[RMDB]
RNA sequence: GGGAACGACUCGAGUAGAGUCGAAAACGAAGGACUUUCGAGUCCUUCGACUUACCGAGAAAGAUCCUCGGUAUAAAUCUGGAACCCUUGGAUACAAGGGAAUGAACGGAAUCUUCGGAUUCCGUAACGGAGUGUUACUAUUCGUAGUAACACUCCGAAAAGAAACAACAACAACAAC
Reactivity to 2A3 in 0.01 (KOAc 150mM, MgCl2 10mM, bicine 150mM(pH8.5), 24C), signal-to-noise 4, nucleotides 027 to 126: c010g000a000a000g010g020a000c010u040u090u160c260g060a020g000u010c000c000u000u000c000g000a000c000u020u010a000c000c000g000a000g010a020a250a020g100a070u050c010c000u000c010g000g000u000a000u040a020a030a010u070c060u110g190g110a140a170c000c000c000u000u010g150g000a220u220a300c020a000a000g000g000g070a010a050u080g040a040a000c000g000g010a000a000u000c000u050u070c190g050g000a000u000u000c000c010g000u000a000a020
Reactivity to DMS in 0.01 (KOAc 150mM, MgCl2 10mM, bicine 150mM(pH8.5), 24C), signal-to-noise 3, nucleotides 027 to 126: c020g020a010a000g000g010a020c000u000u000u020c170g030a020g010u000c000c010u000u000c010g010a090c120u010u000a020c020c000g000a020g000a110a150a090g000a110u000c050c000u000c010g000g000u010a020u000a030a080a120u000c100u000g000g010a150a120c000c000c000u000u000g010g020a150u010a090c000a010a010g000g000g000a030a050u000g020a130a030c000g010g010a010a000u000c000u000u000c160g010g000a010u000u000c000c000g010u000a000a120
Structure probing data (2A3 and DMS) for a 177-nucleotide construct. The reactions ran in a buffer of 150 mM KOAc, 10 mM MgCl2 and 150 mM bicine (pH 8.5), at 24 C. For 2A3, 5,347 sequencing reads were counted. For 2A3 the reverse transcriptase was SuperScript II with manganese. DMS adducts were read by reverse transcription with MarathonRT.